[RMDB]
An RNA of 177 nucleotides, treated with DMS and read out base by base. The RNA was probed in 150 mM KOAc, 10 mM MgCl2 and 150 mM bicine (pH 8.5) at 24 C. It was measured as part of the RMDB library M2PK90. For DMS, 1,148 sequencing reads were counted. High DMS reactivity at an A or C suggests that its Watson-Crick edge is free.
RNA sequence: GGGAACGACUCGAGUAGAGUCGAAAAAUUGAUGCGAAGGGGGGACGGACAAGGCUAUGUUGGCCGGGCGACGGUUGUCCCGGUUUAAGCGUGUAGGCUGGUUUUCCAGGCAAAUCCGGAAAUUGAACGUACCCCAACAAUUCGUUGUUGGGGUACGAAAAGAAACAACAACAACAAC
Reactivity to DMS in 0.01 (KOAc 150mM, MgCl2 10mM, bicine 150mM(pH8.5), 24C), signal-to-noise 1, nucleotides 027 to 126: a130u010u000g000a080u000g030c070g020a100a080g010g000g000g000g020g000a070c080g000g000a050c030a070a060g000g000c060u000a080u010g030u000u000g000g020c010c030g050g000g000c300g000a080c090g010g000u000u000g010u000c000c000c000g010g010u000u000u000a050a080g000c070g000u030g010u040a050g000g020c050u000g010g000u000u010u010u000c050c040a120g010g030c090a040a040a130u000c050c000g000g010a080a050a080u020u020g000a080a130